[RMDB]
This 177-nucleotide RNA was probed chemically with DMS and 2A3. The data come from the RNA Mapping Database (RMDB), library RFMREP. Conditions: 150 mM KOAc, 10 mM MgCl2 and 150 mM bicine (pH 8.5), 24 C. For DMS, 2,328 sequencing reads were counted.
RNA sequence: GGGAACGACUCGAGUAGAGUCGAAAAACAGUGAGAGGAAGGAAUGAUGUGCUAAAAAUUCCCAAGAAAAGGACUCUGAUUGAAUCUGCUUCACUCUGAUUGAACUAUGGUUAUUUCUGACCUUCCUGAUACGCAGUAUGUUCGCAUACUGCGUAUCAAAAGAAACAACAACAACAAC
Reactivity to DMS in 0.01 (KOAc 150mM, MgCl2 10mM, bicine 150mM(pH8.5), 24C), signal-to-noise 3, nucleotides 027 to 126: a110c080a040g030u020g000a050g020a040g000g010a080a050g010g000a070a070u000g010a070u000g010u000g000c060u010a010a050a050a120a160u000u000c000c010c000a170a110g010a040a030a060a190g000g000a030c060u000c050u000g010a110u010u010g010a070a060u000c020u000g000c210u000u000c060a100c080u000c030u000g000a060u000u000g000a040a060c150u000a070u000g030g020u000u000a070u000u000u000c100u000g010a140c010c010u000u010c040c030u000
Reactivity to 2A3 in 0.01 (KOAc 150mM, MgCl2 10mM, bicine 150mM(pH8.5), 24C), signal-to-noise 4, nucleotides 027 to 126: a000c020a020g050u060g080a080g010a010g040g020a060a000g010g020a080a010u070g020a030u080g060u080g040c040u060a080a030a050a060a070u030u020c010c000c020a000a030g050a020a090a000a020g040g000a030c010u000c040u130g080a200u040u090g040a020a050u020c030u070g070c040u060u030c020a040c060u000c030u030g090a090u040u040g050a050a010c030u030a130u140g020g040u060u080a090u050u110u030c040u020g030a020c000c000u020u010c020c010u000